[RMDB]
RNA sequence: GGGAACGACUCGAGUAGAGUCGAAAAAGUGGGGGCAUUAAAGUGAUGUGAACACUGUUGUAGCGCUGCGGGCCUGGUCUGGGUGUGCUACUGCUGGCCCGCCCGUUCCAAGUUGCGUAGUGGACCGUAGGAAAUAGUUUUUCGAAACUAUUUCCUAAAAAGAAACAACAACAACAAC
Reactivity to DMS in 0.01 (KOAc 150mM, MgCl2 10mM, bicine 150mM(pH8.5), 24C), signal-to-noise 8, nucleotides 027 to 126: a050g030u000g020g010g010g010g000c030a050u010u010a070a110a120g010u030g010a070u010g010u000g000a220a130c030a020c030u000g000u000u000g010u010a100g010c040g010c020u010g000c020g000g000g000c010c030u010g000g010u000c030u010g000g010g020u000g010u010g000c010u000a050c180u020g010c230u020g010g000c000c020c010g000c000c020c010g000u000u000c000c000a020a050g010u010u000g010c020g020u000a030g020u010g010g000a080c070c080g010
Reactivity to 2A3 in 0.01 (KOAc 150mM, MgCl2 10mM, bicine 150mM(pH8.5), 24C), signal-to-noise 5, nucleotides 027 to 126: a010g040u070g010g010g000g040g010c020a030u090u170a150a110a060g130u120g090a060u120g060u060g110a070a000c020a000c060u030g040u040u060g040u070a010g080c020g000c030u010g000c000g020g000g000c000c000u010g000g000u030c020u030g010g000g000u010g000u020g010c000u030a090c070u170g110c070u080g030g010c020c050c010g000c010c000c000g010u020u010c000c000a010a010g010u010u080g170c010g000u020a010g010u010g020g050a050c030c020g030